[RMDB]
RNA sequence: GGGAACGACUCGAGUAGAGUCGAAAACGAUGGGGGAGAUGCUAGGAGUAGGCGGCGACCGAAGCGAGGAGGAAAGCAAAGAAAGCCACGGGGCUAGCGAGUGGAUGUUCCGCCCCAAGGGGAGCCGAGAGCCAAUAGUUCGCUAUUGGCAAAAGAAACAACAACAACAAC
Reactivity to DMS in 0.01 (KOAc 150mM, MgCl2 10mM, bicine 150mM(pH8.5), 24C), signal-to-noise 9, nucleotides 027 to 129: c050g030a080u010g000g000g010g010g000a020g000a080u000g040c100u030a020g060g000a060g000u040a040g000g040c090g000g040c120g040a040c040c040g030a120a060g000c170g030a060g020g000a040g010g000a020a050a070g020c180a060a060a060g010a030a040a030g010c030c040a080c170g000g000g000g000c050u030a070g000c090g020a000g020u020g000g040a040u040g000u030u020c020c020g010c010c000c020c080a060a050g000g000g000g000a050g030c050c030g000a080g000a110
Reactivity to 2A3 in 0.01 (KOAc 150mM, MgCl2 10mM, bicine 150mM(pH8.5), 24C), signal-to-noise 9, nucleotides 027 to 129: c060g040a090u120g000g000g000g020g000a030g000a030u090g050c050u070a020g020g020a030g020u100a040g050g030c010g000g020c030g040a040c010c010g020a030a000g040c020g020a020g010g010a000g010g030a050a040a000g040c060a040a030a040g060a070a070a010g020c010c010a050c090g040g000g020g000c020u040a030g040c020g050a030g040u110g040g070a070u130g070u110u030c020c030g020c000c000c000c000a040a050g020g000g000g000a000g000c020c010g040a040g000a000
This 170-nucleotide RNA was probed chemically with DMS and 2A3. The reactions ran in a buffer of 150 mM KOAc, 10 mM MgCl2 and 150 mM bicine (pH 8.5), at 24 C. For 2A3, 38,561 sequencing reads were counted. DMS adducts were read by reverse transcription with MarathonRT. For DMS, 56,532 sequencing reads were counted. High 2A3 reactivity points to a flexible backbone, as in loops and unpaired stretches. It was measured as part of the RMDB library 15KLIB.